RNA sequence: GGGAACGACUCGAGUAGAGUCGAAAAGAAAAACAGGAAGAACCUUUGCUCUCAUACACCCCAUUGUAUUGGGUGGAUUGUUCUUCUAUACAUUGUGGGCAGGUUACUUAGGAUGUCCUCAAAGAAACAUUAGUGCCACGUUCGCGUGGCACUAAUGAAAAGAAACAACAACAACAAC
Reactivity to 2A3 in 0.01 (KOAc 150mM, MgCl2 10mM, bicine 150mM(pH8.5), 24C), signal-to-noise 2, nucleotides 027 to 126: g110a000a110a010a000a030c090a010g060g020a040a000g020a050a020c000c000u030u000u060g230c030u000c000u000c030a020u040a040c010a050c030c050c060c080a100u220u170g080u160a000u080u200g010g050g040u000g000g040a020u010u060g000u020u050c010u020u000c000u000a010u000a000c100a040u080u150g010u020g020g030g000c000a030g140g000u120u060a080c000u070u040a040g100g000a080u020g020u040c000c040u080c010a030a050a000g060a000a150a000
Reactivity to DMS in 0.01 (KOAc 150mM, MgCl2 10mM, bicine 150mM(pH8.5), 24C), signal-to-noise 2, nucleotides 027 to 126: g000a030a050a140a030a120c300a140g020g000a030a030g010a020a050c010c060u000u030u000g060c000u000c000u000c020a060u000a070c050a030c210c010c080c170a080u030u000g000u030a060u020u010g000g000g000u030g020g000a050u000u000g010u000u000c000u000u000c000u010a090u010a030c150a030u010u000g050u000g000g000g070c000a000g020g000u010u020a110c150u000u000a130g040g050a160u000g000u000c000c000u000c030a010a020a110g000a120a080a180

The record gives the reactivity of an RNA of 177 nucleotides to 2A3 and DMS.
It was measured as part of the RMDB library OK1LIB.
For DMS, 1,969 sequencing reads were counted.
For 2A3, 1,139 sequencing reads were counted.
Reactivities are given for positions 27 through 126.
The reactions ran in a buffer of 150 mM KOAc, 10 mM MgCl2 and 150 mM bicine (pH 8.5), at 24 C.
DMS adducts were read by reverse transcription with MarathonRT.